[RMDB]
RNA sequence: GGGAACGACUCGAGUAGAGUCGAAAACGGGUGGGAAGUGUUGAGGCCGCUGAGAUUAAUAGCACGGCUGAGUGGCUUGCUGGCCUUGUUCGCGAUAAUAACCUGCCGCAAAAGCCCUUUGUGGUGCGACUUGCUAGCUUUUCGAAGCUAGCAAGUCAAAAGAAACAACAACAACAAC
Reactivity to DMS in 0.01 (KOAc 150mM, MgCl2 10mM, bicine 150mM(pH8.5), 24C), signal-to-noise 1, nucleotides 027 to 126: c100g020g020g030u000g010g000g000a130a060g020u000g030u020u010g000a070g010g010c010c000g000c080u020g000a110g000a140u010u010a070a130u010a110g010c010a050c060g010g020c050u010g000a110g020u010g000g000c000u000u000g010c040u000g040g000c000c040u000u000g010u020u000c050g030c060g000a070u000a070a100u020a090a110c020c060u010g010c000c000g020c050a010a060a080a120g010c030c020c000u000u010u000g020u020g010g030u000g000c150
Notes
The data come from the RNA Mapping Database (RMDB), library OK2TST. This 177-nucleotide RNA was probed chemically with DMS. DMS adducts were read by reverse transcription with MarathonRT. The RNA was probed in 150 mM KOAc, 10 mM MgCl2 and 150 mM bicine (pH 8.5) at 24 C.